This 177-nucleotide RNA was probed chemically with DMS and 2A3. Conditions: 150 mM KOAc, 10 mM MgCl2 and 150 mM bicine (pH 8.5), 24 C. For DMS, 2,499 sequencing reads were counted.
RNA sequence: GGGAACGACUCGAGUAGAGUCGAAAAGAUAUGGAAAUCUUGCAAGUGCAACAGCCAGGCUCGGAAACGAGCCUGGACAUGCACGACCAAGAGUUUCCUAAGUCAAAGGACUACUUCGGUAGUCCAACACAACAACUACGUUCGCGUAGUUGUUGUGAAAAGAAACAACAACAACAAC
Reactivity to DMS in 0.01 (KOAc 150mM, MgCl2 10mM, bicine 150mM(pH8.5), 24C), signal-to-noise 4, nucleotides 027 to 126: g000a090u000a300u020g000g010a010a020a040u000c010u000u010g000c030a060a300g020u000g010c000a010a090c230a160g010c000c020a010g000g000c020u000c000g000g000a100a060a240c000g020a000g010c000c000u000g000g000a010c120a140u000g010c000a000c000g000a300c300c000a000a000g000a020g000u000u000u000c000c000u010a040a140g020u000c020a080a200a190g000g010a020c000u010a000c000u010u000c230g020g000u010a000g010u000c000c000a030a190
Reactivity to 2A3 in 0.01 (KOAc 150mM, MgCl2 10mM, bicine 150mM(pH8.5), 24C), signal-to-noise 2, nucleotides 027 to 126: g010a030u090a040u110g000g010a010a000a020u000c000u000u000g000c030a130a060g000u000g000c010a110a090c040a250g110c020c000a000g000g000c010u010c010g000g040a070a110a090c010g000a000g020c040c000u010g000g000a000c000a020u000g020c010a010c010g000a010c000c000a020a010g050a040g120u000u030u000c000c000u020a190a050g070u050c090a190a030a170g020g000a000c010u000a000c000u040u110c300g130g000u000a000g000u060c020c000a020a010